[RMDB]
Source information
This 207-nucleotide RNA was probed chemically with DMS and 2A3. For DMS, 2,341 sequencing reads were counted.

RNA sequence: GGGAACGACUCGAGUAGAGUCGAAAAGAUCUGCGCAGAUCCGAAACGCUAGCAAACAGCCCGCAUCAUGUCGUCUCCUAACUUCGACGUGGUGAAAUACUGAGCUUAUGCGAGUAAGCCUGUUAGCAAUAGAUCAGAACGUUCGCGUUCUGAUCAAGUAUUCCACGAGAUUCGUCUCGUGGAAUACAAAAGAAACAACAACAACAAC
Reactivity to DMS in 0.01 (KOAc 150mM, MgCl2 10mM, bicine 150mM(pH8.5), 24C), signal-to-noise 2, nucleotides 027 to 156: g000a030u010c010u010g010c140g020c130a060g010a050u000c020c050g000a150a080a040c050g020c000u010a010g060c040a110a060a190c060a150g020c020c000c050g000c010a020u000c010a030u000g000u010c020g000u000c130u000c180c050u000a100a100c040u010u010c010g010a010c020g120u000g040g000u000g000a020a070a150u010a100c080u020g000a060g000c010u000u000a240u010g010c190g000a150g030u020a050a080g040c010c030u000g030u000u000a090g020c050a140a150u000a110g020a030u010c000a030g020a030a030c010g000u010u000c290g050c000g020u000u000c010u010g000a000u000c020a020a070
Reactivity to 2A3 in 0.01 (KOAc 150mM, MgCl2 10mM, bicine 150mM(pH8.5), 24C), signal-to-noise 5, nucleotides 027 to 156: g020a030u030c030u060g040c110g010c130a000g010a050u020c010c070g060a120a040a020c080g000c020u030a010g000c020a080a040a140c020a070g070c010c010c030g010c020a010u020c000a000u020g000u000c000g020u000c060u100c120c120u170a160a200c040u080u030c020g000a010c000g000u000g010g000u020g010a030a030a010u160a040c060u050g030a020g030c010u030u010a030u120g090c050g010a040g070u010a010a010g020c000c020u030g010u060u040a010g010c010a070a140u060a180g000a000u010c000a000g000a000a000c000g020u060u090c250g020c000g090u000u000c030u000g010a000u000c000a000a000
Source information: 2A3 adducts were read by reverse transcription with SuperScript II with manganese. Conditions: 150 mM KOAc, 10 mM MgCl2 and 150 mM bicine (pH 8.5), 24 C.